[RMDB]
RNA sequence: GGGAACGACUCGAGUAGAGUCGAAAACCGGGUCCUUGCUGAAUUCCGCGGUCAUCAGCUUGACGGCGACGGUCCACUCCUUGACGGUGUGCUCGGCCUCGUAGACCUCGCCCAUCCCGCCCCGGCCGUUCGCCUAAUGAUUCGUCAUUAGGCGAACAAAAGAAACAACAACAACAAC
Reactivity to DMS in 0.01 (KOAc 150mM, MgCl2 10mM, bicine 150mM(pH8.5), 24C), signal-to-noise 2, nucleotides 027 to 126: c050c020g030g000g020u010c060c040u000u000g000c020u010g000a090a170u000u000c070c030g010c060g000g010u000c090a100u020c030a080g010c050u010u000g020a140c200g000g020c020g010a080c090g020g010u000c000c050a050c020u000c020c020u000u010g010a080c130g010g000u000g020u000g010c130u000c070g010g020c190c020u010c140g000u000a080g010a030c050c000u000c060g010c020c000c130a160u000c010c000c000g010c080c000c020c050g000g010c190c110
Reactivity to 2A3 in 0.01 (KOAc 150mM, MgCl2 10mM, bicine 150mM(pH8.5), 24C), signal-to-noise 2, nucleotides 027 to 126: c020c000g000g000g000u050c020c000u050u050g010c010u010g050a140a110u210u050c070c040g050c050g060g000u020c020a040u000c010a020g000c000u040u060g040a040c000g000g030c020g010a070c130g010g000u000c010c000a030c030u060c010c020u030u100g050a070c070g130g050u070g030u110g080c040u040c060g060g010c020c040u090c040g000u000a010g030a050c030c000u000c010g000c000c000c010a050u030c010c030c020g020c000c010c010c000g010g000c010c040